[RMDB]
RNA sequence: GGGAACGACUCGAGUAGAGUCGAAAAGAAGAGGGCCGUGAAGAAACGCUCGUUUGCAGCAAACCCCGCGAGGCUGUCGAGCACGAUGAGGAGCACUGUGAGCGCCAUCAGCGAGAGGAUGGCUAGACUGAUUACGCUAAUUCGUUAGCGUAAUCAGAAAAGAAACAACAACAACAAC
Reactivity to DMS in 0.01 (KOAc 150mM, MgCl2 10mM, bicine 150mM(pH8.5), 24C), signal-to-noise 5, nucleotides 027 to 126: g000a100a100g010a070g010g000g010c040c050g030u000g020a100a110g000a090a090a120c120g010c030u000c030g020u010u000u000g000c060a040g000c070a080a110a160c070c020c000c040g000c120g010a090g010g010c020u010g010u000c030g010a050g020c040a110c100g010a060u010g000a080g000g010a070g010c080a050c090u000g030u000g000a090g010c110g000c010c020a010u000c020a090g010c060g010a060g000a090g010g000a020u000g000g000c020u000a040g010a180
Reactivity to 2A3 in 0.01 (KOAc 150mM, MgCl2 10mM, bicine 150mM(pH8.5), 24C), signal-to-noise 3, nucleotides 027 to 126: g030a030a010g050a070g000g010g000c040c020g020u040g060a090a060g030a110a120a000c040g000c000u020c000g040u070u150u120g040c030a030g000c000a010a000a240c010c000c000c030g010c030g020a030g100g000c020u040g080u110c010g000a000g040c020a010c060g070a070u130g030a040g040g030a040g020c030a000c070u070g030u030g090a030g050c040g010c010c000a020u040c010a010g140c020g070a090g000a010g050g080a020u020g020g000c000u000a000g020a050